[RMDB]
The data come from the RNA Mapping Database (RMDB), library PDB130. An RNA of 207 nucleotides, treated with 2A3 and read out base by base. The 2A3 profile rests on 821 reads.

RNA sequence: GGGAACGACUCGAGUAGAGUCGAAAAUCUUAAAGCCGAGAUCAUGUCGAAGUAUGACGACUUCAGCCUAGGUAUUGAUACCGAAGCUGUUGCCUGGGAGAAGUUCCUGGCAGCAGAGGCUGAAUGUGCUUUAACGAACGCUCGUCUCUAUAGGCCUCCAUUAUCGCCUGUUCGCAGGCGAUAAUGGAAAAGAAACAACAACAACAAC
Reactivity to 2A3 in 0.01 (KOAc 150mM, MgCl2 10mM, bicine 150mM(pH8.5), 24C), signal-to-noise 2, nucleotides 027 to 156: u070c000u030u060a080a050a010g010c000c010g080a040g050a120u120c090a100u160g040u080c030g100a120a070g060u130a090u280g100a120c050g050a060c000u000u000c000a000g010c000c000u020a030g010g000u020a130u050u300g170a150u100a130c000c000g000a030a000g050c000u000g000u020u000g000c000c020u020g000g060g010a110g020a250a000g080u080u020c020c020u040g000g000c000a000g000c000a000g010a010g010g000c000u000g000a000a000u090g000u010g030c000u020u020u080a060a030c080g020a060a000c010g010c040u020c020g010u020c020u010c030u040a130u100a120g000g060c020c000u000